This 177-nucleotide RNA was probed chemically with DMS. Reactivities are rounded to 0.1 and cut off at 0 and 3. For DMS the reverse transcriptase was MarathonRT.
[RMDB]
RNA sequence: GGGAACGACUCGAGUAGAGUCGAAAAUAUGCUAAAGAACCUUGACAUUUGGAUGACUUAAUUUACAUUAUCCUCAUUGGUUUGAUGUAUAAGCAAAGAGUUAGUGCAAGCAAUAAUAUUGCUUAACCGUUGGGGGUACAUUCGUGUACCCCCAACGAAAAGAAACAACAACAACAAC
Reactivity to DMS in 0.01 (KOAc 150mM, MgCl2 10mM, bicine 150mM(pH8.5), 24C), signal-to-noise 1, nucleotides 027 to 126: u000a020u000g010c050u000a090a110a250g000a040a070c010c000u010u010g020a040c210a190u000u000u040g000g000a060u010g010a240c140u020u000a060a100u010u040u000a210c120a120u000u020a020u000c000c000u000c170a170u000u000g020g000u010u000u000g090a100u020g000u000a020u000a000a090g000c090a040a070a110g000a090g000u020u000a050g000u020g010c140a020a020g010c000a010a000u000a000a040u000a300u000u000g000c040u000u000a130a050c060
The reactions ran in a buffer of 150 mM KOAc, 10 mM MgCl2 and 150 mM bicine (pH 8.5), at 24 C.